[RMDB]
RNA sequence: GGGAACGACUCGAGUAGAGUCGAAAAGAUAUGGACGACCAUGGCAAGCUGCGAUUCGGAAACGAAUCGGCAGUGAUGACCCAUGUCGUCCUAAGUCAAAAGCAGUAGGCGCUUCGGCGCCUACUGCGUAGUCUAAGUAGUUCGCUACUUAGACUACAAAAGAAACAACAACAACAAC
Reactivity to 2A3 in 0.01 (KOAc 150mM, MgCl2 10mM, bicine 150mM(pH8.5), 24C), signal-to-noise 2, nucleotides 027 to 126: g010a000u020a000u060g000g000a000c000g010a010c030c210a040u040g000g000c110a160a180g020c040u000g030c010g010a010u000u000c010g000g010a000a020a000c000g000a000a010u010c110g050g050c010a000g010u000g050a180u090g020a000c010c000c010a010u030g000u010c010g010u020c000c000u000a000a000g000u010c010a030a060a120a160g000c010a010g010u020a000g000g020c000g020c050u080u180c300g110g010c030g020c000c010u000a000c000u010g000c020
Reactivity to DMS in 0.01 (KOAc 150mM, MgCl2 10mM, bicine 150mM(pH8.5), 24C), signal-to-noise 7, nucleotides 027 to 126: g000a010u000a080u010g010g000a010c000g020a020c300c300a040u000g010g000c040a090a050g010c000u000g000c000g000a010u000u000c000g000g000a030a010a040c000g010a000a000u000c000g030g030c000a000g030u000g010a070u020g000a070c300c000c000a020u000g000u000c000g030u010c000c000u000a000a060g000u010c010a080a090a130a230g010c010a000g020u010a000g010g010c000g010c000u000u020c220g020g020c000g030c000c000u000a000c000u000g000c000

Chemical mapping of a 177-nucleotide RNA with 2A3 and DMS. Source: RMDB library TTRDES, as collected in RNAgym. The DMS profile rests on 12,262 reads. 2A3 adducts were read by reverse transcription with SuperScript II with manganese. The reactions ran in a buffer of 150 mM KOAc, 10 mM MgCl2 and 150 mM bicine (pH 8.5), at 24 C.